[RMDB]
RNA sequence: GGGAACGACUCGAGUAGAGUCGAAAAGAUAUGGACGGGUAGACACUGAUGACCUAAAUCGGAAACGAUUUAGCAAGGUGGUUACACCGUCCUAAGUCAAACGUGGUACCGUUCGCGGUACCACGAAGUACUAAUGUGGGUUCGCCCACAUUAGUACAAAAGAAACAACAACAACAAC
Reactivity to DMS in 0.01 (KOAc 150mM, MgCl2 10mM, bicine 150mM(pH8.5), 24C), signal-to-noise 5, nucleotides 027 to 126: g010a070u000a300u000g000g000a010c000g010g010g020u000a010g000a040c010a000c000u010g000a120u010g000a110c300c000u000a000a000a000u010c000g030g000a120a150a260c010g000a010u010u000u020a010g000c040a050a090g000g020u000g000g000u000u000a020c020a150c000c010g000u000c010c000u000a010a050g010u000c040a070a120a260c030g020u010g000g020u000a010c000c000g010u010u000c280g010c010g010g020u000a010c010c000a000c000g000a000a090
Reactivity to 2A3 in 0.01 (KOAc 150mM, MgCl2 10mM, bicine 150mM(pH8.5), 24C), signal-to-noise 5, nucleotides 027 to 126: g020a020u060a040u170g010g000a000c000g000g000g020u010a020g070a040c010a010c040u220g060a300u130g030a160c000c020u010a010a000a000u020c010g030g000a040a090a030c020g000a010u000u010u010a000g010c010a150a280g020g000u030g010g020u050u030a040c300a130c030c010g000u000c000c000u000a010a000g010u010c040a040a060a080c020g010u010g000g000u000a000c000c010g010u040u080c300g000c020g130g000u000a000c000c000a000c000g000a010a020
Chemical mapping of a 177-nucleotide RNA with DMS and 2A3.
Reactivities are given for positions 27 through 126.
The RNA was probed in 150 mM KOAc, 10 mM MgCl2 and 150 mM bicine (pH 8.5) at 24 C.
The data come from the RNA Mapping Database (RMDB), library TTRDES.
For 2A3, 13,274 sequencing reads were counted.